[RMDB]
RNA sequence: GGGAACGACUCGAGUAGAGUCGAAAACCAAACCUAAUACUAACUAUAGCCAUAUUAUCAAUUUUAAUCGGAGGGUGAGGAGGGCUAAAUCAAACCCAACUUCGAAAAAUCAUAGCAUACUCAUCAAUCGCACACAUAGGAUGAAUGACAGCAGUAUAUGUAUCCCUCUGUUCGCAGAGGGAUACAUAAAAGAAACAACAACAACAAC
Reactivity to 2A3 in 0.01 (KOAc 150mM, MgCl2 10mM, bicine 150mM(pH8.5), 24C), signal-to-noise 1, nucleotides 027 to 156: c010c000a090a000a030c030c010u100a110a050u200a150c030u040a090a030c010u020a020u020a130g030c020c000a020u050a080u220u080a040u090c040a120a090u040u130u120u180a130a030u070c030g030g000a000g020g000g040u010g010a020g060g020a010g020g010g000c000u030a120a000a000u030c000a000a010a070c000c000c000a060a030c000u060u060c020g050a070a000a000a030a030u130c120a070u040a020g010c000a010u020a210c000u020c000a040u030c010a080a080u140c030g020c060a000c000a060c000a120u060a020g040g070a070u010g020a020a110u120g010a110c020a030g000c020a000g070u110a080u060